[RMDB]
This 177-nucleotide RNA was probed chemically with DMS and 2A3. The reactions ran in a buffer of 150 mM KOAc, 10 mM MgCl2 and 150 mM bicine (pH 8.5), at 24 C. Values cover nucleotides 27 to 126. The data come from the RNA Mapping Database (RMDB), library OK2TST.
RNA sequence: GGGAACGACUCGAGUAGAGUCGAAAAAGCUCCUCAACCAGAUUCCGGGGGUCUCGUGUCGCAAGCCGAAGGGUGCCCUCUACUGCUUCCCGAAGCUUGAUGCCGAGCGCUUCGGCAUCGAGAGCGAGAAUUUAAACCUGUUCGCAGGUUUAAAUUCAAAAGAAACAACAACAACAAC
Reactivity to DMS in 0.01 (KOAc 150mM, MgCl2 10mM, bicine 150mM(pH8.5), 24C), signal-to-noise 4, nucleotides 027 to 126: a150g000c080u000c020c020u000c060a090a140c080c050a150g000a150u000u010c080c070g000g000g010g010g010u010c030u000c050g020u020g010u000c050g010c100a070a110g010c060c020g000a120a120g000g000g020u000g010c030c050c030u000c040u000a050c090u010g020c090u010u000c000c010c010g010a130a120g000c000u000u000g000a040u000g000c000c000g010a030g000c270g000c140u010u000c000g010g000c010a010u000c000g010a030g010a080g010c080g020a200
Reactivity to 2A3 in 0.01 (KOAc 150mM, MgCl2 10mM, bicine 150mM(pH8.5), 24C), signal-to-noise 2, nucleotides 027 to 126: a000g020c020u040c020c020u020c050a050a110c010c040a050g040a220u080u080c090c060g040g010g000g000g080u020c020u000c030g130u100g060u060c020g010c090a070a040g010c050c020g030a020a010g020g020g020u080g020c010c010c000u070c020u030a070c070u040g020c000u090u050c000c000c000g030a080a010g020c000u000u030g010a030u010g020c010c000g010a040g040c120g050c090u090u030c000g000g010c000a000u010c000g010a020g000a030g030c030g000a070